[RMDB]
RNA sequence: GGGAACGACUCGAGUAGAGUCGAAAAAUCUUUGGGCAUUUUAUAAAUAGUGAUAGGCAGCUCAUCUUUGAUAUAUACAAUGUACAUAUUUACAACAAAGAGAUGGACAAUUUUGAUGAAGGCACAAUAAAAGUGUUAGAGGAAACUGCAGAACGCCCCAAAUCAACAUCUUCGGAUGUUGAUUUGGAAAAGAAACAACAACAACAAC
Reactivity to 2A3 in 0.01 (KOAc 150mM, MgCl2 10mM, bicine 150mM(pH8.5), 24C), signal-to-noise 1, nucleotides 027 to 156: a000u020c030u040u130u060g080g000g000c000a030u000u000u180u050a220u150a070a160a030u150a030g020u020g010a050u000a030g000g010c020a000g040c000u030c150a040u010c050u110u110u060g020a080u050a000u000a000u000a060c000a300a140u090g060u000a080c020a030u140a030u130u050u060a030c040a050a020c020a000a050a030g030a010g030a030u020g020g020a030c090a090a100u000u000u090u230g060a090u090g000a010a010g050g110c020a000c000a030a110u230a210a100a020a000g010u090g060u020u050a050g000a000g040g040a030a180a030c000u020g000c010a000g030a050a000c060g010c050c060
This 207-nucleotide RNA was probed chemically with 2A3. Reactivities are rounded to 0.1 and cut off at 0 and 3. The 2A3 profile rests on 524 reads.